[RMDB]
Annotation:
The record gives the reactivity of an RNA of 177 nucleotides to DMS and 2A3. Values cover nucleotides 27 to 126. The RNA was probed in 150 mM KOAc, 10 mM MgCl2 and 150 mM bicine (pH 8.5) at 24 C.
RNA sequence: GGGAACGACUCGAGUAGAGUCGAAAAGAUAUGGAGGAUGACUCCGACGAUCCUACCCACCGCUUUCGGAAACGAAAGCGAGGGGGAGGAGCCAUCCUCCUAAGUCAAAGUGGACUUCGGUCCACAACAUAUAAACUGCCUUCGGGCAGUUUAUAUGAAAAGAAACAACAACAACAAC
Reactivity to DMS in 0.01 (KOAc 150mM, MgCl2 10mM, bicine 150mM(pH8.5), 24C), signal-to-noise 5, nucleotides 027 to 126: g000a040u000a110u010g000g000a000g010g010a010u000g010a020c000u000c000c010g030a120c250g010a130u010c150c120u000a230c010c010c000a120c030c010g010c000u000u000u000c010g010g000a030a040a060c000g010a000a020a000g010c000g000a020g000g000g000g000g010a060g010g010a010g010c020c010a010u000c010c010u000c000c000u000a000a060g000u000c020a070a090a150g000u000g010g000a020c000u000u010c150g020g010u000c000c000a000c010a050a130
Reactivity to 2A3 in 0.01 (KOAc 150mM, MgCl2 10mM, bicine 150mM(pH8.5), 24C), signal-to-noise 2, nucleotides 027 to 126: g000a000u030a010u080g000g000a020g010g000a000u030g010a020c010u010c020c010g010a020c050g070a120u200c030c060u100a080c010c000c010a020c000c020g000c010u010u010u000c000g010g020a020a020a010c000g000a010a000a000g020c000g000a040g000g000g000g030g090a240g000g000a000g000c000c000a000u000c000c010u010c000c000u000a010a000g000u000c030a110a060a060g020u000g000g010a000c000u040u070c300g050g000u000c000c000a000c000a000a010
About this RNA: For DMS, 7,371 sequencing reads were counted. The data come from the RNA Mapping Database (RMDB), library TTRDEL.